[RMDB]
RNA sequence: GGGAACGACUCGAGUAGAGUCGAAAAAGAAUCAACCAGGACACUCAAUGAAAACUUAGCCACAUGUUGGGCACUGUUUCUCACACUUGUUCUGCAAACAACUGAAUUGUCUCCCAAAUGGUGGCAGCGUUUAUCGAAGCUUCGGCUUCGAUAAACGAAAAGAAACAACAACAACAAC
Reactivity to DMS in 0.01 (KOAc 150mM, MgCl2 10mM, bicine 150mM(pH8.5), 24C), signal-to-noise 1, nucleotides 027 to 126: a150g050a080a020u010c030a080a060c120c070a160g000g000a070c030a080c050u000c060a110a160u000g000a030a000a050a050c160u000u000a110g020c000c020a030c020a060u000g000u000u000g050g000g020c300a070c090u000g000u000u010u000c050u000c090a100c130a010c210u010u000g030u000u000c070u000g010c060a100a010a080c090a110a050c030u000g000a100a060u020u000g050u000c260u020c020c000c000a000a020a110u000g000g000u000g000g020c030a080g010